[RMDB]
RNA sequence: GGGAACGACUCGAGUAGAGUCGAAAAGGGGUCGGAAUCGUUGAAAUCCACUAUACAUCGAUCAUACUGAAGCCUCCACGGUAUGGGAGUAUUCUGGAUGGAGAUUCCGACGGAGGCACCCAAAAGCUUGAAGCUGUCUUCGGACAGCUUCAAGCAAGCUUAAGUGCAACUUCGGUUGCACUUAAGCAAAAGAAACAACAACAACAAC
Reactivity to 2A3 in 0.01 (KOAc 150mM, MgCl2 10mM, bicine 150mM(pH8.5), 24C), signal-to-noise 1, nucleotides 027 to 156: g000g010g060g020u010c000g000g000a020a010u000c010g060u150u050g010a000a010a000u000c010c010a010c020u030a000u020a010c020a030u300c040g000a010u000c000a000u000a010c020u050g040a140a030g000c000c000u000c000c000a000c010g000g000u010a000u000g010g000g000a030g010u010a010u000u030c000u010g020g000a000u000g000g000a020g000a000u000u010c000c000g000a000c000g010g000a000g000g000c000a010c010c000c000a040a150a010a010g010c010u010u010g000a000a010g010c000u000g020u010c010u010u090c300g040g000a010c030a000g030c010u000u000c000a000a000g000c000a000a000